[RMDB]
RNA sequence: GGGAACGACUCGAGUAGAGUCGAAAAAGCAGAAUGGCUUGAAGACCACCAAAGUCUCCAUCACUGACCUCCUAGCUCAUACCAAUUACACCUUUGAAAUCUGGGCUGUGAAUGGAGUGUCCAAAUAAUUCGGUCUACUUUUCGAAGUAGACCGAAUAAAAGAAACAACAACAACAAC
Reactivity to 2A3 in 0.01 (KOAc 150mM, MgCl2 10mM, bicine 150mM(pH8.5), 24C), signal-to-noise 1, nucleotides 027 to 126: a000g140c120a060g000a300a190u090g110g040c060u030u020g000a010a030g000a040c040c050a020c030c000a100a070a130g010u000c000u000c040c010a080u010c020a050c040u130g110a150c010c010u030c010c000u030a010g020c000u000c040a030u030a040c020c030a010a000u040u050a130c010a100c110c140u110u110u080g060a070a040a010u060c030u050g000g050g000c030u050g020u070g040a000a080u040g000g000a020g010u020g000u030c000c000a060a190a000u100a050
Reactivity to DMS in 0.01 (KOAc 150mM, MgCl2 10mM, bicine 150mM(pH8.5), 24C), signal-to-noise 2, nucleotides 027 to 126: a040g020c040a170g000a170a100u010g000g010c110u000u000g020a150a120g020a150c000c020a090c180c150a060a090a220g030u000c000u000c010c000a010u010c000a060c070u000g000a230c060c040u000c020c010u000a040g000c070u000c030a030u020a090c070c060a040a100u010u000a090c160a070c190c090u010u000u000g010a120a130a100u000c240u000g010g000g020c070u000g020u020g000a050a040u000g010g000a060g000u010g000u010c070c070a040a070a070u000a090
Chemical mapping of a 177-nucleotide RNA with 2A3 and DMS. The reactions ran in a buffer of 150 mM KOAc, 10 mM MgCl2 and 150 mM bicine (pH 8.5), at 24 C. The data come from the RNA Mapping Database (RMDB), library OK2TST. For DMS the reverse transcriptase was MarathonRT.